The record gives the reactivity of an RNA of 177 nucleotides to DMS and 2A3. Source: RMDB library OK2TRN, as collected in RNAgym. The RNA was probed in 150 mM KOAc, 10 mM MgCl2 and 150 mM bicine (pH 8.5) at 24 C. Values cover nucleotides 27 to 126.

[RMDB]
RNA sequence: GGGAACGACUCGAGUAGAGUCGAAAAGGGAGAGGGCAUCUCGCGCUACGUCGCCGACCCGGGCCGCUCCACGUUCAAGUCCAGGCUGGCCAAGCUGGGCAGUUCAAGCUUCCUGCAGAUGAUGCUCCGUAGUGUCGUUGUUCGCAACGACACUACGAAAAGAAACAACAACAACAAC
Reactivity to DMS in 0.01 (KOAc 150mM, MgCl2 10mM, bicine 150mM(pH8.5), 24C), signal-to-noise 2, nucleotides 027 to 126: g010g000g000a130g020a110g010g010g000c040a060u000c040u000c060g010c070g000c060u020a060c150g020u000c080g000c010c060g010a050c020c020c010g030g010g000c040c050g010c040u000c000c050a100c090g010u000u000c070a080a080g020u000c020c020a080g010g020c030u000g000g000c070c130a120a110g010c050u000g020g010g030c010a090g010u000u020c060a120a130g020c070u000u000c010c020u000g010c040a050g000a080u010g000a090u000g000c030u000c080
Reactivity to 2A3 in 0.01 (KOAc 150mM, MgCl2 10mM, bicine 150mM(pH8.5), 24C), signal-to-noise 2, nucleotides 027 to 126: g100g000g010a070g040a050g010g020g000c020a070u030c040u010c060g000c000g020c040u060a080c090g160u090c030g030c040c020g030a060c020c000c010g000g030g010c000c030g000c010u010c020c000a070c040g040u090u100c100a100a040g030u000c000c020a030g090g040c010u050g030g020c100c030a040a020g040c040u050g000g000g000c020a030g020u040u110c070a050a000g020c030u070u010c000c000u050g020c020a020g020a160u110g010a020u050g030c010u000c020